[RMDB]
RNA sequence: GGGAACGACUCGAGUAGAGUCGAAAAUAAAGAGCAAACGACAUUUGAGGAAGCACUUGAUGAAGCGAAAAGACUUGGUUUUGCUGAAGCGGAUCCAACUGAUGAUGUAGAAGGGGUAGAUGCAGCGUAGCCCCACCUUUUUCGAAAGGUGGGGCUAAAAAGAAACAACAACAACAAC
Reactivity to DMS in 0.01 (KOAc 150mM, MgCl2 10mM, bicine 150mM(pH8.5), 24C), signal-to-noise 1, nucleotides 027 to 126: u000a040a020a080g000a110g020c030a110a010a140c080g020a090c090a020u000u000u030g010a120g000g000a040a100g000c040a070c090u010u000g000a050u010g010a090a040g010c070g020a050a020a080a050g000a030c080u010u000g010g000u000u020u000u010g010c010u000g010a070a040g020c080g010g010a050u010c040c020a080a100c100u000g000a090u010g000a080u000g030u010a050g020a050a080g000g000g000g060u000a040g010a070u000g010c050a050g000c200g020